[RMDB]
RNA sequence: GGGAACGACUCGAGUAGAGUCGAAAACAUGAGGGACAUUCCAGCGAUAAGAGAAGACCUAGAGAGAAGAAGGGUUGUCUUAAUAAAAUGGUUAAUAAGAUGCAUAAUGUCAUCAGGUACAACACGGAACUCUCCGUCAAUUCGUUGACGGAGAGUUAAAAGAAACAACAACAACAAC
Reactivity to 2A3 in 0.01 (KOAc 150mM, MgCl2 10mM, bicine 150mM(pH8.5), 24C), signal-to-noise 1, nucleotides 027 to 126: c080a040u110g030a120g000g050g000a040c000a090u000u070c020c050a030g000c000g070a100u040a180a060g020a000g000a150a000g040a010c000c010u000a070g000a020g020a000g000a150a230g040a070a080g010g010g000u000u030g060u020c040u040u150a210a160u250a130a090a030a070u140g060g020u060u050a120a000u070a070a090g000a020u070g010c000a010u030a300a020u230g060u080c000a050u000c010a000g100g000u050a040c010a120a020c050a030c060g040g090
Reactivity to DMS in 0.01 (KOAc 150mM, MgCl2 10mM, bicine 150mM(pH8.5), 24C), signal-to-noise 2, nucleotides 027 to 126: c040a080u020g000a020g000g040g030a030c050a040u000u000c100c060a130g000c060g000a090u010a100a080g000a060g000a010a070g010a040c060c030u030a110g020a160g020a150g010a040a010g010a060a100g000g000g000u000u000g000u000c060u000u000a050a090u020a060a080a070a090u000g010g010u000u000a100a130u020a070a100g000a000u000g010c080a120u000a040a100u000g000u000c000a050u000c020a040g000g010u000a040c110a040a040c080a060c170g000g000